This 177-nucleotide RNA was probed chemically with 2A3 and DMS.
RNA sequence: GGGAACGACUCGAGUAGAGUCGAAAAACCGUCGAGUACCAAGAGAAGGUACACGACGGAAUCACAACAUCUCAGUUGUGGAAGUCUAGCUGUUUGGUAGACUAAAAAGACAGCAAGCGGAAACGCAUACAGGCACUUAUUUCGAUAAGUGCCUGUAAAAAGAAACAACAACAACAAC
Reactivity to 2A3 in 0.01 (KOAc 150mM, MgCl2 10mM, bicine 150mM(pH8.5), 24C), signal-to-noise 3, nucleotides 027 to 126: a000c000c000g000u010c000g020a020g010u000a000c000c010a200a000g060a030g090a300a080g040g000u000a000c000a000c000g000a000c000g000g000a000a020u060c010a000c000a000a000c040a220u090c030u080c180a030g000u010u000g000u000g000g020a060a000g010u010c060u130a030g030c000u010g150u170u120u070g240g010u120a050g000a020c020u050a060a110a000a000a000g070a010c000a010g020c040a090a040g010c010g050g000a050a080a010c060g000c010a000
Reactivity to DMS in 0.01 (KOAc 150mM, MgCl2 10mM, bicine 150mM(pH8.5), 24C), signal-to-noise 2, nucleotides 027 to 126: a120c000c010g020u000c000g000a120g030u000a000c000c000a190a170g040a230g000a080a070g000g010u000a000c030a070c050g020a000c000g000g000a030a040u020c000a000c000a010a000c050a090u050c030u020c080a180g000u000u000g010u000g020g010a080a120g000u000c000u010a080g000c020u000g000u030u010u040g020g000u010a080g000a100c050u000a020a030a090a030a000g000a020c030a020g000c030a170a100g000c000g000g000a070a070a140c060g000c010a270
The DMS profile rests on 3,000 reads.
The 2A3 profile rests on 2,039 reads.